[RMDB]
RNA sequence: GGGAACGACUCGAGUAGAGUCGAAAAGAUAUGGAGGUGAACUACCAAAUAAACAGCGAAGAACUCGGAAACGAGGGAGCUGUGAAGUUGGCACCUCCUAAGUCAUAUCCGCUGUUCGCAGCGGAAAGAUAUCACCACUGUUCGCAGUGGUGAUAUCAAAAGAAACAACAACAACAAC
Reactivity to DMS in 0.01 (KOAc 150mM, MgCl2 10mM, bicine 150mM(pH8.5), 24C), signal-to-noise 3, nucleotides 027 to 126: g010a060u000a300u000g010g010a010g000g010u010g000a140a090c110u010a300c020c000a020a010a020u000a220a150a010c030a000g010c000g010a130a170g020a080a210c000u000c000g000g000a090a090a170c000g010a010g000g010g000a070g010c030u000g000u000g000a040a090g000u010u000g000g000c000a010c020c000u010c000c000u000a020a110g000u010c020a070u010a120u000c010c000g010c000u000g000u010u020c190g000c010a010g010c000g010g000a020a010a060
Reactivity to 2A3 in 0.01 (KOAc 150mM, MgCl2 10mM, bicine 150mM(pH8.5), 24C), signal-to-noise 3, nucleotides 027 to 126: g010a020u090a030u150g000g000a010g000g010u020g020a080a050c060u080a070c300c000a000a010a000u040a020a070a010c010a000g030c020g220a300a020g050a140a030c000u000c000g020g030a080a070a050c010g020a000g000g000g030a020g000c020u000g020u010g020a190a090g000u010u000g000g000c000a000c000c000u010c000c010u000a000a000g000u000c000a000u050a110u200c000c010g000c010u010g010u030u090c300g000c140a000g000c000g010g000a000a020a020